This 177-nucleotide RNA was probed chemically with 2A3 and DMS. For 2A3 the reverse transcriptase was SuperScript II with manganese.
[RMDB]
RNA sequence: GGGAACGACUCGAGUAGAGUCGAAAAACGCAUAUGCUACGGCAUAUGCGAAUGGGGGCCCAAGGCGAGAUGAAGCUGUAGUCUCGCUGGAAGGACUAGAGGUUAGAGGAGACCCCCCCGAAACAAACUGUAAUCCAGGAUUCGUCCUGGAUUACAGAAAAGAAACAACAACAACAAC
Reactivity to 2A3 in 0.01 (KOAc 150mM, MgCl2 10mM, bicine 150mM(pH8.5), 24C), signal-to-noise 3, nucleotides 027 to 126: a010c000g000c000a010u010a000u000g000c010u010a010c200g140g000c000a010u000a000u000g010c000g010a000a010u030g000g000g000g000g000c040c000c000a000a040g040g000c010g000a010g000a010u070g100a220a210g110c200u180g070u070a030g010u000c000u000c000g000c000u000g000g020a000a010g000g010a020c040u050a020g010a040g050g000u070u050a060g030a220g280g120a020g090a010c000c010c000c020c000c000c010g000a050a040a030c070a020a040a020
Reactivity to DMS in 0.01 (KOAc 150mM, MgCl2 10mM, bicine 150mM(pH8.5), 24C), signal-to-noise 4, nucleotides 027 to 126: a140c000g000c000a000u000a010u000g020c020u000a120c250g030g000c000a020u000a000u020g000c000g010a020a030u000g010g000g000g000g030c000c000c000a300a120g000g000c000g030a000g000a010u000g010a230a300g020c160u030g000u020a300g000u000c000u000c010g020c010u000g020g000a150a270g020g000a090c030u020a050g000a090g010g010u000u000a030g010a260g020g010a080g020a050c000c000c000c000c000c000c010g000a100a110a080c180a070a110a150
Source information
For 2A3, 1,927 sequencing reads were counted. The RNA was probed in 150 mM KOAc, 10 mM MgCl2 and 150 mM bicine (pH 8.5) at 24 C. As a SHAPE reagent, 2A3 marks flexible, mostly unpaired nucleotides at the ribose 2'-OH.